[RMDB]
RNA sequence: GGGAACGACUCGAGUAGAGUCGAAAAAGUCUAUUCUAAGCAGAAUGACAUUGUUAUAUUCUUCGCUGUCUUCAGCAAAUACAAUAGUUGAUUUAGAGGAAUCCUCCAGAUUCAAUACUGCAACUAAAAUACGGACUAUGUUCGCAUAGUCCGUAUUAAAAGAAACAACAACAACAAC
Reactivity to 2A3 in 0.01 (KOAc 150mM, MgCl2 10mM, bicine 150mM(pH8.5), 24C), signal-to-noise 8, nucleotides 027 to 126: a000g050u030c040u050a100u040u000c020u060a060a120g130c040a010g130a040a020u050g000a000c010a050u000u060g120u090u050a170u020a050u160u080c070u040u110c080g000c040u040g050u190c090u240u200c060a010g010c040a030a080a070u220a060c120a070a150u070a060g010u010u030g050a120u070u140u240a030g020a020g010g080a030a010u040c000c030u070c060c010a020g020a040u020u030c020a020a080u060a170c030u020g030c010a020a020c010u070a060a090
Reactivity to DMS in 0.01 (KOAc 150mM, MgCl2 10mM, bicine 150mM(pH8.5), 24C), signal-to-noise 4, nucleotides 027 to 126: a100g020u010c010u020a030u000u000c000u000a140a170g010c190a070g000a020a030u010g000a050c020a130u010u000g000u000u020a090u050a100u020u000c040u000u020c140g010c010u000g000u020c180u010u020c020a060g000c030a100a080a110u050a080c190a080a150u020a020g010u000u000g000a080u030u010u010a010g000a120g010g000a070a010u010c000c060u040c230c120a150g000a020u000u000c020a020a040u010a040c040u010g000c020a020a040c010u000a050a050